Structure probing data (2A3 and DMS) for a 177-nucleotide construct. Reactivities are given for positions 27 through 126. For 2A3, 1,690 sequencing reads were counted. Conditions: 150 mM KOAc, 10 mM MgCl2 and 150 mM bicine (pH 8.5), 24 C. The data come from the RNA Mapping Database (RMDB), library M2PK50. DMS adducts were read by reverse transcription with MarathonRT. 2A3 is a SHAPE reagent: it acylates the 2'-hydroxyl of flexible nucleotides of all four kinds. For DMS, 858 sequencing reads were counted.
[RMDB]
RNA sequence: GGGAACGACUCGAGUAGAGUCGAAAACAUCAUCCCUUCGGGGAUGAUGAAAGAUCGAAUGAUCAGGCUUACCGUAAUAAGCCAAAAUACGAGCGAAACGCAAAAGACCUGUGUUCGCACAGGUCAAGGUUCUUCACAAGUUCGCUUGUGAAGAACCAAAAGAAACAACAACAACAAC
Reactivity to 2A3 in 0.01 (KOAc 150mM, MgCl2 10mM, bicine 150mM(pH8.5), 24C), signal-to-noise 2, nucleotides 027 to 126: c000a000u000c000a010u020c000c030c000u000u040c170g060g000g000g000a000u000g000a010u000g000a000a020a000g040a000u020c040g070a270a190u300g000a020u060c030a040g000g000c010u030u030a050c050c080g050u020a050a090u090a040a030g020c000c000a000a060a010a040u250a040c100g010a040g020c040g040a180a090a070c110g000c050a050a020a000a080g000a000c000c000u000g020u010g020u020u060c190g010c090a000c020a000g050g000u000c000a000a000
Reactivity to DMS in 0.01 (KOAc 150mM, MgCl2 10mM, bicine 150mM(pH8.5), 24C), signal-to-noise 1, nucleotides 027 to 126: c030a000u000c000a000u010c000c000c000u000u020c280g030g000g000g000a000u000g000a000u000g010a090a060a030g000a030u000c000g000a090a080u010g000a050u000c020a200g040g010c010u010u000a040c140c120g020u000a080a300u000a010a000g020c000c000a060a030a100a040u010a050c120g000a080g010c030g000a020a060a040c170g000c070a000a090a060a090g000a000c010c000u000g010u000g020u000u020c170g010c010a000c010a000g000g010u000c000a010a020